RNA sequence: GGGAACGACUCGAGUAGAGUCGAAAAAGGAAACAAAAGCUAGUCUCAGUUGGCAGUGUUCUACACACGGAAAGACUCAUGGGACGGUUAUCUCGACGAUUUGGCUAUCGAUUUGGCUGCCGACACUGUACCAUAGGUAUUUCGAUACCUAUGGUACAAAAGAAACAACAACAACAAC
Reactivity to 2A3 in 0.01 (KOAc 150mM, MgCl2 10mM, bicine 150mM(pH8.5), 24C), signal-to-noise 9, nucleotides 027 to 126: a000g120g020a070a050a020c070a020a120a030a000g050c030u070a050g010u020c000u000c040a060g010u070u050g050g000c060a040g010u010g060u130u070c110u180a050c060a010c010a010c140g050g050a060a080a020g060a030c010u030c080a080u090g000g000g020a010c010g000g000u060u040a060u030c040u020c030g100a090c040g040a080u060u040u150g060g000c040u040a030u120c040g080a090u040u030u110g040g000c020u030g010c010c010g010a020c030a010c100u030
Reactivity to DMS in 0.01 (KOAc 150mM, MgCl2 10mM, bicine 150mM(pH8.5), 24C), signal-to-noise 6, nucleotides 027 to 126: a070g000g010a100a070a100c100a070a050a090a100g000c050u010a050g010u000c020u000c020a100g000u000u000g000g020c100a100g020u000g010u010u010c100u000a110c150a070c120a040c100g010g000a060a090a090g000a070c050u010c120a100u000g000g010g010a050c050g000g010u000u010a050u000c040u000c040g020a110c080g000a080u010u010u000g010g000c080u010a060u000c050g000a140u000u010u000g010g000c030u000g010c040c010g010a080c110a050c160u000
Structure probing data (2A3 and DMS) for a 177-nucleotide construct. DMS adducts were read by reverse transcription with MarathonRT. It was measured as part of the RMDB libraries RFM100 and RFMREP. The RNA was probed in 150 mM KOAc, 10 mM MgCl2 and 150 mM bicine (pH 8.5) at 24 C. 2A3 adducts were read by reverse transcription with SuperScript II with manganese.